[RMDB]
RNA sequence: GGGAACGACUCGAGUAGAGUCGAAAAGCCUAGGAGUACGCUCCUAGGCAAGAGCUAGCACGUACCGCUAGCAAAGAAAAGGUACGAAGACGGAAACGUCAAAGCCGACGUCUACGGACGUCGGCAAUAUAGUGCGAUAUUUCGAUAUCGCACUAUAAAAAGAAACAACAACAACAAC
Reactivity to 2A3 in 0.01 (KOAc 150mM, MgCl2 10mM, bicine 150mM(pH8.5), 24C), signal-to-noise 4, nucleotides 027 to 126: g000c000c000u000a000g000g010a000g010u070a030c250g050c090u000c000c000u000a000g000g000c000a000a000g000a010g000c000u000a000g000c010a020c300g000u010a000c000c000g000c000u000a000g000c050a010a030a010g030a000a020a000a000g010g000u010a000c010g020a050a060g010a000c030g010g040a010a140a040c010g000u020c040a040a090a000g010c000c000g000a000c010g000u030c010u020a070c300g090g000a000c010g000u000c000g000g000c000a000a000
Reactivity to DMS in 0.01 (KOAc 150mM, MgCl2 10mM, bicine 150mM(pH8.5), 24C), signal-to-noise 2, nucleotides 027 to 126: g040c000c010u000a000g000g010a000g000u010a120c260g000c000u000c000c020u000a000g020g000c000a010a040g000a180g000c020u000a000g000c000a120c010g010u010a000c010c000g060c000u020a000g000c000a010a130a090g000a030a000a040a200g020g010u000a000c030g000a300a180g000a010c020g030g000a180a140a080c000g000u010c000a110a090a050g000c040c020g030a110c080g000u000c010u000a110c140g040g020a030c060g050u000c000g020g010c000a000a000
The record gives the reactivity of an RNA of 177 nucleotides to 2A3 and DMS.
Reactivities are given for positions 27 through 126.
For DMS the reverse transcriptase was MarathonRT.
The RNA was probed in 150 mM KOAc, 10 mM MgCl2 and 150 mM bicine (pH 8.5) at 24 C.